[RMDB]
RNA sequence: GGGAACGACUCGAGUAGAGUCGAAAACAUCGGUUGCCGACAUAUAAUAAGUGAUACGUGGAUUGAUAGGAUUAAUCGUGGAGCUGAUAAAGUCGUUGGCGAUAGCACCCACAAAGUAGACAUGUGCCGCUAUGAUUAUCUUCGGAUAAUCAUAGCGAAAAGAAACAACAACAACAAC
Reactivity to 2A3 in 0.01 (KOAc 150mM, MgCl2 10mM, bicine 150mM(pH8.5), 24C), signal-to-noise 5, nucleotides 027 to 126: c010a030u070c050g170g060u130u050g050c040c000g010a010c020a010u300a000u030a090a090u120a090a020g040u040g070a010u010a120c050g010u060g070g130a070u060u110g080a100u170a180g170g030a050u110u110a070a080u140c010g020u020g030g020a020g040c020u020g020a050u060a100a060a010g020u050c030g000u000u040g020g010c010g000a010u030a010g020c010a060c020c070c010a020c050a030a110a000g140u150a020g060a070c040a110u120g040u100g120c040
Reactivity to DMS in 0.01 (KOAc 150mM, MgCl2 10mM, bicine 150mM(pH8.5), 24C), signal-to-noise 5, nucleotides 027 to 126: c080a050u000c030g010g000u000u000g010c100c020g010a050c040a050u010a070u000a110a140u020a090a060g010u010g010a300u010a020c030g010u010g000g000a070u000u000g010a160u000a070g010g020a300u000u010a080a050u010c040g000u000g010g000a300g000c010u000g000a040u000a050a110a090g010u000c040g000u000u000g010g020c020g010a030u000a040g010c090a100c000c020c010a090c150a040a070a060g010u010a060g000a090c110a050u000g010u000g000c100
An RNA of 177 nucleotides, treated with 2A3 and DMS and read out base by base. DMS adducts were read by reverse transcription with MarathonRT. For 2A3 the reverse transcriptase was SuperScript II with manganese.